[RMDB]
RNA sequence: GGGAACGACUCGAGUAGAGUCGAAAAGAAUAAACAAAGUCCUAUAACCCUCAAUAAUCGCUCGUUAGGAGCGACACGCGAGGACUUUGGCGUGUCCAUCCAACGAAAUAAGCUCGAAAGACGAGCACCGUAGGGAUGCGUUCGCGCAUCCCUACGGAAAAGAAACAACAACAACAAC
Reactivity to 2A3 in 0.01 (KOAc 150mM, MgCl2 10mM, bicine 150mM(pH8.5), 24C), signal-to-noise 2, nucleotides 027 to 126: g080a000a100u140a030a020a000c000a000a000a000g020u030c000c000u140a090u110a210a040c050c000c000u110c050a050a070u090a100a090u110c080g030c000u000c010g140u010u150a040g040g000a000g000c000g000a000c000a000c020g000c000g040a100g070g000a000c060u000u000u000g000g000c000g000u000g020u000c000c000a030u000c000c000a050a090c100g080a060a060a060u220a150a070g020c050u060c050g100a170a000a000g140a010c010g000a000g030c000a000
Chemical mapping of a 177-nucleotide RNA with 2A3. 2A3 is a SHAPE reagent: it acylates the 2'-hydroxyl of flexible nucleotides of all four kinds. The reactions ran in a buffer of 150 mM KOAc, 10 mM MgCl2 and 150 mM bicine (pH 8.5), at 24 C. For 2A3, 705 sequencing reads were counted.